Record summary
An RNA of 177 nucleotides, treated with DMS and 2A3 and read out base by base. 2A3 adducts were read by reverse transcription with SuperScript II with manganese. Reactivities are rounded to 0.1 and cut off at 0 and 3. The reactions ran in a buffer of 150 mM KOAc, 10 mM MgCl2 and 150 mM bicine (pH 8.5), at 24 C.
[RMDB]
RNA sequence: GGGAACGACUCGAGUAGAGUCGAAAACAGGGGAUGGAGACACGGAAAGGACAUCGUGUGCUAUAAGUCUGACGUAAGUCGAGCUUGCAACAUGGGUCUAUGCCUGGAUAAGUCACGUGGUUGCCCCUUUUCCUUAAAUAUUCGUAUUUAAGGAAAAAAAAGAAACAACAACAACAAC
Reactivity to DMS in 0.01 (KOAc 150mM, MgCl2 10mM, bicine 150mM(pH8.5), 24C), signal-to-noise 9, nucleotides 027 to 126: c060a080g000g010g000g010a080u010g010g010a150g010a070c020a060c100g010g000a070a090a300g010g000a020c010a040u020c020g040u000g010u000g000c020u010a040u010a030a010g020u020c010u010g000a010c010g000u050a110a150g010u000c000g010a030g000c010u030u000g000c020a040a030c020a020u000g010g000g010u000c010u000a070u020g010c060c010u010g000g010a110u010a080a130g010u010c030a070c040g010u010g000g000u000u010g010c020c000c000c090
Reactivity to 2A3 in 0.01 (KOAc 150mM, MgCl2 10mM, bicine 150mM(pH8.5), 24C), signal-to-noise 9, nucleotides 027 to 126: c040a010g010g010g010g010a020u110g090g070a110g020a050c010a010c030g030g030a050a070a070g060g000a010c010a120u100c040g010u020g010u010g000c010u030a020u020a170a010g030u020c030u030g000a010c010g080u130a080a090g000u010c030g020a010g010c000u010u020g000c040a100a060c000a090u030g020g000g020u010c020u050a050u150g050c000c010u040g030g020a080u070a160a040g020u050c010a000c090g030u030g020g040u060u100g020c000c000c000c000